[RMDB]
Conditions: 150 mM KOAc, 10 mM MgCl2 and 150 mM bicine (pH 8.5), 24 C. The record gives the reactivity of an RNA of 177 nucleotides to 2A3 and DMS.
RNA sequence: GGGAACGACUCGAGUAGAGUCGAAAAGGCGAGGUCUUCGGACCUCGCCAAAUGACCGCCAUUAUUGGCUAAGCCUACACGGACGGCCGGGUCAAAUGCCGAAAACUUCCGCCUUCGGGCGGAAGAAGACAUCUAUUUUGUUCGCAAAAUAGAUGUCAAAAGAAACAACAACAACAAC
Reactivity to 2A3 in 0.01 (KOAc 150mM, MgCl2 10mM, bicine 150mM(pH8.5), 24C), signal-to-noise 3, nucleotides 027 to 126: g000g000c010g040a000g050g000u080c070u140u200c300g060g030a000c000c000u030c000g020c000c000a010a000a000u010g000a000c020c000g080c020c000a120u110u110a120u240u300g000g020c010u010a100a030g010c010c000u060a050c080a030c120g030g060a020c030g020g000c000c030g060g040g010u040c040a040a040a090u100g010c020c010g050a080a080a030a040c010u000u000c010c020g000c030c020u050u090c180g090g000g000c030g020g020a000a000g000a000a000
Reactivity to DMS in 0.01 (KOAc 150mM, MgCl2 10mM, bicine 150mM(pH8.5), 24C), signal-to-noise 2, nucleotides 027 to 126: g000g030c000g000a030g030g020u000c020u000u000c190g040g020a020c000c000u000c000g040c010c000a000a020a060u010g000a080c130c070g010c040c020a040u010u000a110u030u010g000g030c000u000a050a140g020c010c000u000a130c130a110c080g020g000a110c110g000g000c000c050g010g020g010u000c070a050a050a140u000g010c040c030g000a070a100a060a150c000u000u000c000c000g010c000c000u000u020c190g030g000g040c010g000g000a010a000g010a080a070
For 2A3, 2,479 sequencing reads were counted. Source: RMDB library M2PK50, as collected in RNAgym. Reactivities are rounded to 0.1 and cut off at 0 and 3.